An RNA of 207 nucleotides, treated with 2A3 and DMS and read out base by base. The DMS profile rests on 3,246 reads.
RNA sequence: GGGAACGACUCGAGUAGAGUCGAAAACGUUACCUCAGAUACGGUAGUUACAAAUGGCCUCAUCAUAUUCUUAACUUGCAAGAAAAUUAUACUCAAGAGAAAAGUAAAUGCAGAAGAGGAAAGCCUUAUCUAGAGGCUGUUUACAUUCAGCAAGGGAACGUAGUAUGCGAUUCGUCGCAUACUACGUAAAAGAAACAACAACAACAAC
Reactivity to 2A3 in 0.01 (KOAc 150mM, MgCl2 10mM, bicine 150mM(pH8.5), 24C), signal-to-noise 3, nucleotides 027 to 156: c020g040u070u080a060c000c000u000c030a030g030a030u020a010c040g000g020u080a070g090u180u170a130c100a040a150a130u170g070g020c040c000u010c000a050u030c010a010u060a120u150u050c020u020u020a040a030c010u000u040g010c040a030a030g090a090a150a020a000u130u120a110u090a180c050u020c040a020a030g070a010g060a100a210a030a040g030u090a030a120a060u110g030c050a010g000a200a010g000a080g000g000a060a010a000g010c000c010u010u020a040u010c020u050a060g010a000g060g000c000u010g000u010u040u020a090c060a050u090u100c020a010g020c060a120a070g050g020g060a050
Reactivity to DMS in 0.01 (KOAc 150mM, MgCl2 10mM, bicine 150mM(pH8.5), 24C), signal-to-noise 2, nucleotides 027 to 156: c060g020u020u000a040c010c020u000c030a090g020a160u000a060c040g020g020u000a060g000u000u000a160c140a090a070a160u000g030g030c100c010u000c070a190u000c050a120u000a120u000u000c020u000u010a070a210c020u010u000g020c020a050a040g000a050a050a060a190u000u000a170u010a060c030u040c010a060a140g020a130g010a050a110a100a120g000u000a020a040a130u010g050c100a130g010a050a150g000a120g000g010a120a090a130g000c010c000u000u000a090u000c070u010a180g010a020g030g020c000u010g040u010u000u010a010c100a200u010u000c070a140g040c000a090a050g000g050g010a120

For 2A3, 1,621 sequencing reads were counted. For 2A3 the reverse transcriptase was SuperScript II with manganese.